Chemical mapping of a 177-nucleotide RNA with DMS and 2A3. The reactions ran in a buffer of 150 mM KOAc, 10 mM MgCl2 and 150 mM bicine (pH 8.5), at 24 C.
[RMDB]
RNA sequence: GGGAACGACUCGAGUAGAGUCGAAAAGCAUGGGCACACCAAUGUGGUAGUUUAUAUCUUCUUGUGCUCCGGCAUCGGAUCUCUGACUGUGAUGUCCUGCAAGGCAUUGGGCCUAGCCAUACGGCAACGUGCUAAUGGUAUUCGUACCAUUAGCACGAAAAGAAACAACAACAACAAC
Reactivity to DMS in 0.01 (KOAc 150mM, MgCl2 10mM, bicine 150mM(pH8.5), 24C), signal-to-noise 5, nucleotides 027 to 126: g020c040a050u010g010g010g010c020a060c040a240c090c070a060a070u010g010u010g020g010u000a020g000u010u000u010a070u000a060u010c030u000u000c040u000u000g010u000g020c030u000c050c100g000g010c040a080u000c070g010g010a040u000c040u010c050u000g000a070c060u000g010u010g000a080u000g010u000c020c010u000g010c110a090a050g000g000c030a180u000u000g010g000g020c030c030u000a100g000c020c060a080u000a080c160g000g010c090a070a140
Reactivity to 2A3 in 0.01 (KOAc 150mM, MgCl2 10mM, bicine 150mM(pH8.5), 24C), signal-to-noise 5, nucleotides 027 to 126: g010c010a030u100g010g000g000c030a030c010a010c070c040a070a110u180g030u090g080g040u030a070g020u020u250u110a190u030a030u050c040u100u020c020u050u080g030u030g020c020u030c040c030g020g000c000a020u050c030g080g040a090u030c050u000c040u120g090a100c000u030g040u060g110a080u060g040u030c000c020u030g040c050a050a030g020g000c020a040u120u200g070g060g000c000c000u000a010g000c020c010a120u160a210c080g010g000c020a040a050